[RMDB]
RNA sequence: GGGAACGACUCGAGUAGAGUCGAAAAGAAUUGGUAUGUAAGCUACUUCUUCCAGUAGCUGCGUCAUAACAUCAAGGUUAUGCAUACUGAGCCGAAGGUCAGCUUCGGUCCUCCAAGGAAGACCAAAUACAGCUCAGCCCGUUCGCGGGCUGAGCAACACGUAUACGUACUUCGGUACGUAUACGUGAAAAGAAACAACAACAACAAC
Reactivity to 2A3 in 0.01 (KOAc 150mM, MgCl2 10mM, bicine 150mM(pH8.5), 24C), signal-to-noise 4, nucleotides 027 to 156: g110a010a100u020u040g000g000u000a000u000g000u000a020a010g000c000u000a000c010u080u100c000u010u000c020c000a000g010u000a000g000c010u000g000c000g000u020c010a000u000a000a010c010a060u300c200a100a050g300g000u010u000a000u000g010c000a000u010a010c010u010g000a000g010c000c000g000a000a000g030g080u300c110a100g060c100u000u000c000g020g000u000c000c020u050c030c030a040a050g000g000a010a000g000a010c070c070a020a040a040u220a130c110a050g000c010u000c000a000g000c000c000c000g070u120u150c250g020c000g080g000g020c000u000g000a000g000c000a000a000
Reactivity to DMS in 0.01 (KOAc 150mM, MgCl2 10mM, bicine 150mM(pH8.5), 24C), signal-to-noise 2, nucleotides 027 to 156: g000a130a150u010u000g010g010u030a010u000g010u030a300a300g070c000u010a010c000u000u010c000u000u000c040c000a300g020u000a050g020c000u000g030c010g000u000c030a010u000a000a000c000a300u000c200a130a090g000g040u000u000a010u000g010c060a090u000a010c010u000g000a080g010c010c020g030a030a060g000g050u000c200a140g000c000u000u000c000g010g000u010c060c060u010c050c070a050a180g030g020a090a050g010a300c140c050a010a020a150u010a090c090a110g000c000u000c010a010g000c000c030c000g030u010u000c300g050c060g000g040g050c000u000g010a000g050c000a000a010
This 207-nucleotide RNA was probed chemically with 2A3 and DMS. For 2A3, 2,923 sequencing reads were counted. High 2A3 reactivity points to a flexible backbone, as in loops and unpaired stretches. DMS adducts were read by reverse transcription with MarathonRT.